[RMDB]
RNA sequence: GGGAACGACUCGAGUAGAGUCGAAAAGCGUGUACCUGACACGGUCAAUGCGGGGGAUGUAUUUAGCGCAUCCGUAGAUGUGACUAACCGCGAUAUAUCAGUGUUGAAUUACCAGUGGGACAUUCCAGCUAGAUGGAGAUUUCGAUCUCCAUCUAGCAAAAGAAACAACAACAACAAC
Reactivity to 2A3 in 0.01 (KOAc 150mM, MgCl2 10mM, bicine 150mM(pH8.5), 24C), signal-to-noise 1, nucleotides 027 to 126: g020c020g000u040g000u080a100c000c020u010g010a000c010a020c080g000g020u090c040a050a050u140g010c020g000g050g030g000g010a020u060g070u180a200u060u150u080a020g020c000g000c020a000u010c000c010g000u140a090g000a030u030g000u030g110a200c010u030a020a010c000c020g000c060g040a000u000a010u010a030u190c080a100g020u020g040u170u100g070a140a120u080u070a050c040c000a030g040u040g030g000g030a000c010a030u060u050c000c000a010
Reactivity to DMS in 0.01 (KOAc 150mM, MgCl2 10mM, bicine 150mM(pH8.5), 24C), signal-to-noise 3, nucleotides 027 to 126: g000c090g010u000g010u000a090c060c030u010g030a190c030a040c040g010g010u000c140a070a080u010g000c040g000g000g000g000g000a100u020g000u000a130u000u000u000a040g010c050g000c000a030u000c000c300g000u010a070g000a050u010g010u000g000a180c020u010a040a080c090c040g020c050g010a090u000a070u030a070u000c030a080g010u000g020u000u010g000a050a160u000u000a070c050c010a070g020u000g010g020g010a070c080a080u000u000c040c030a120